[RMDB]
RNA sequence: GGGAACGACUCGAGUAGAGUCGAAAAGCGGAAAGGAGUGCGUGGUAGCACAAACCAAACCAAUCCGCGGCACAAGGUCGCACAUGCACAGCUUCGCCUGUGCAAAGCGAACAAGGCGAAGAAAGAAGAUUACCAGUAUGUUCGCAUACUGGUAAUCAAAAGAAACAACAACAACAAC
Reactivity to 2A3 in 0.01 (KOAc 150mM, MgCl2 10mM, bicine 150mM(pH8.5), 24C), signal-to-noise 9, nucleotides 027 to 126: g000c000g000g020a010a030a040g030g020a100g020u010g010c040g020u100g110g180u220a030g020c010a020c010a050a050a040c060c030a090a030a040c010c010a010a040u000c000c000g000c000g020g000c020a030c010a180a050g100g030u020c010g000c010a040c010a160u050g000c000a010c000a020g010c010u210u200c100g020c040c000u000g000u000g000c000a010a010a000g010c010g020a040a010c020a030a040g040g000c030g040a040a010g100a070a140a020g170a050a020
Reactivity to DMS in 0.01 (KOAc 150mM, MgCl2 10mM, bicine 150mM(pH8.5), 24C), signal-to-noise 9, nucleotides 027 to 126: g010c010g010g000a030a070a290g000g000a120g020u010g010c070g010u020g020g000u040a120g020c020a020c020a100a130a120c160c170a070a120a210c010c010a030a300u000c000c000g010c000g010g010c030a100c040a090a300g000g000u010c010g010c020a070c160a230u000g000c000a000c030a020g000c020u050u030c240g010c170c000u000g010u010g000c010a000a070a090g000c040g000a020a020c020a070a140g000g000c000g010a080a080g000a100a100a080g020a130a060
Record summary:
An RNA of 177 nucleotides, treated with 2A3 and DMS and read out base by base. Values cover nucleotides 27 to 126. For DMS, 20,604 sequencing reads were counted. It was measured as part of the RMDB library OK1LIB.